Notes: Structure probing data (DMS and 2A3) for a 207-nucleotide construct. Reactivities are rounded to 0.1 and cut off at 0 and 3. The data come from the RNA Mapping Database (RMDB), library OK3TST. 2A3 adducts were read by reverse transcription with SuperScript II with manganese.
[RMDB]
RNA sequence: GGGAACGACUCGAGUAGAGUCGAAAAACUGGCAGCAGUAGAUAAACUUCUCCCAUGAAUUGUCUGCUCUUUUCACACAUUCACCUUUAAAAUGGAAGUUAAGAACAAAUGGAACAGUACAUACAAAACACCAUGUGAGAUGAAAGAUGCUUUAAAACAUUCAGAGAAUGUUCGCAUUCUCUGAAUGAAAAGAAACAACAACAACAAC
Reactivity to DMS in 0.01 (KOAc 150mM, MgCl2 10mM, bicine 150mM(pH8.5), 24C), signal-to-noise 3, nucleotides 027 to 156: a070c030u000g020g030c080a110g000c000a080g010u000a100g000a190u000a070a110a130c040u000u010c050u000c010c030c010a150u000g010a140a130u010u000g020u000c020u000g000c030u010c040u000u000u000u000c050a150c070a100c050a180u000u000c030a060c040c050u000u000u010a040a070a100a060u000g000g020a140a120g010u000u000a040a050g010a070a090c020a050a070a090u000g000g020a090a100c030a050g080u010a050c020a110u000a190c030a050a050a060a060c040a110c050c010a030u000g010u010g010a040g010a100u000g010a080a070a080g000a120u010g010c000u000u010u010a050a060a090a150
Reactivity to 2A3 in 0.01 (KOAc 150mM, MgCl2 10mM, bicine 150mM(pH8.5), 24C), signal-to-noise 6, nucleotides 027 to 156: a000c020u040g090g010c030a040g010c020a010g040u090a030g040a090u150a080a160a060c040u090u010c020u020c030c050c010a030u070g050a040a080u100u050g020u040c020u010g020c010u010c010u060u050u050u060c070a060c020a020c000a070u060u060c030a100c030c000u120u140u150a080a130a020a040u110g040g020a030a040g050u080u150a070a050g050a080a030c050a060a070a060u090g020g000a030a020c010a030g040u080a020c010a030u070a010c020a030a050a060a000c050a010c030c030a000u040g010u020g040a050g000a030u060g030a060a030a020g080a020u080g040c010u080u140u150a040a110a020a020